Structure probing data (2A3 and DMS) for a 177-nucleotide construct. The 2A3 profile rests on 1,170 reads. 2A3 is a SHAPE reagent: it acylates the 2'-hydroxyl of flexible nucleotides of all four kinds. The reactions ran in a buffer of 150 mM KOAc, 10 mM MgCl2 and 150 mM bicine (pH 8.5), at 24 C. Values are in units of 0.01, from 0 to 300, in steps of 10.
RNA sequence: GGGAACGACUCGAGUAGAGUCGAAAACAUACGGACUUCGGUCCGUAUGAAAGAACCUCAAAUUGACGCAAACUUCCGCGUCAUCGCGAGGAAGCGACGAAAAAAUCGAGGUGUUCGCACCUCGAAACUCCUACGGACACUUCGGUGUCCGUAGGAGAAAAGAAACAACAACAACAAC
Reactivity to 2A3 in 0.01 (KOAc 150mM, MgCl2 10mM, bicine 150mM(pH8.5), 24C), signal-to-noise 1, nucleotides 027 to 126: c000a000u000a000c000g000g010a020c000u050u080c300g070g000u000c030c010g030u000a010u000g000a000a000a000g040a020a080c020c000u030c010a020a030a050u030u030g000a000c010g010c070a050a090a240c180u270u060c150c150g000c000g040u000c000a010u010c000g040c050g020a020g000g040a040a000g080c050g230a170c080g060a090a000a010a000a000a130u020c000g010a000g000g000u010g000u030u050c210g050c050a000c000c030u000c000g000a000a000a010
Reactivity to DMS in 0.01 (KOAc 150mM, MgCl2 10mM, bicine 150mM(pH8.5), 24C), signal-to-noise 1, nucleotides 027 to 126: c010a030u000a030c010g000g000a020c000u040u010c300g010g000u000c000c010g030u000a000u040g000a060a050a100g000a150a150c000c000u000c060a040a230a050u000u000g000a000c000g000c010a110a070a240c300u000u020c260c110g010c000g010u000c000a000u020c180g040c300g000a020g000g000a050a160g000c020g000a120c120g010a000a020a110a010a050a060u000c000g030a010g020g000u000g020u000u000c200g010c000a010c020c000u000c010g000a000a070a050